[RMDB]
Annotation: The record gives the reactivity of an RNA of 207 nucleotides to 2A3 and DMS.
RNA sequence: GGGAACGACUCGAGUAGAGUCGAAAAGGCCAUCGUUUUUACCAGACCAUUUUCGAUGGCCAUAGGUCUGGCUUAUAGUUCAAUCGCCGAGAGGCGUACAGUUAGAGUAGCGAGCUCGAAGCACGCGACCGAUAAGAGCUCGCGAAGGUCGCGGAGACAUCAGUAGGCCAUUCGUGGCCUACUGAUGAAAAGAAACAACAACAACAAC
Reactivity to 2A3 in 0.01 (KOAc 150mM, MgCl2 10mM, bicine 150mM(pH8.5), 24C), signal-to-noise 1, nucleotides 027 to 156: g000g000c040c010a050u010c020g060u060u010u140u120u180a020c020c010a040g110a070c030c030a190u020u010u040u180c030g020a000u000g020g010c000c000a010u030a000g040g020u000c020u000g020g010c030u170u210a190u120a090g040u060u000c060a000a080u060c010g000c020c000g010a000g000a020g060g000c020g010u010a020c010a040g070u160u170a050g040a040g040u050a010g030c030g000a000g040c000u000c070g020a070a000g160c060a000c090g000c020g040a060c000c030g030a040u020a080a000g000a000g020c060u000c000g020c000g000a000a000g000g000u000c040g000c030g050g020a070g000a020
Reactivity to DMS in 0.01 (KOAc 150mM, MgCl2 10mM, bicine 150mM(pH8.5), 24C), signal-to-noise 1, nucleotides 027 to 156: g000g050c000c000a000u000c010g020u000u000u000u000u000a130c060c020a020g000a040c070c040a230u000u000u000u000c090g030a040u000g060g030c000c010a080u010a000g020g060u000c030u000g020g000c030u000u010a110u000a180g030u000u060c030a170a060u000c100g070c010c000g020a300g040a300g040g020c010g000u010a000c040a150g000u000u000a090g020a110g020u010a240g000c060g000a030g010c000u000c000g000a140a170g020c040a050c120g020c090g000a050c000c000g000a070u000a130a170g000a050g000c030u000c030g020c020g100a040a090g020g000u020c010g010c030g000g000a260g000a150
For DMS the reverse transcriptase was MarathonRT. It was measured as part of the RMDB library OK3TST. For 2A3 the reverse transcriptase was SuperScript II with manganese.